[RMDB]
Record summary
Chemical mapping of a 177-nucleotide RNA with 2A3. For 2A3 the reverse transcriptase was SuperScript II with manganese. The reactions ran in a buffer of 150 mM KOAc, 10 mM MgCl2 and 150 mM bicine (pH 8.5), at 24 C. Values are in units of 0.01, from 0 to 300, in steps of 10.

RNA sequence: GGGAACGACUCGAGUAGAGUCGAAAACGAUUAUGCCGACGAAUGGUUCGCCAUGCGCGACCGCCUGCUGCACGUCCAGCAGAAAUAACAAGAACAGGAUCAGGGCGUGACAUCGGAAACAGCGACCGGCCCGGUAUGACUUCGGUCAUACCGGGCCAAAAGAAACAACAACAACAAC
Reactivity to 2A3 in 0.01 (KOAc 150mM, MgCl2 10mM, bicine 150mM(pH8.5), 24C), signal-to-noise 1, nucleotides 027 to 126: c030g130a080u140u030a000u300g000c000c010g000a080c000g140a300a110u290g010g000u130u080c000g000c020c000a050u220g040c080g000c000g060a040c040c000g000c090c090u180g020c000u000g000c000a000c020g070u090c000c000a000g000c000a000g030a000a300a000u300a240a280c130a110a080g090a090a000c000a050g050g000a030u180c000a000g050g000g000c000g000u000g030a060c000a030u000c000g140g000a000a290a000c100a090g000c010g000a000c000c000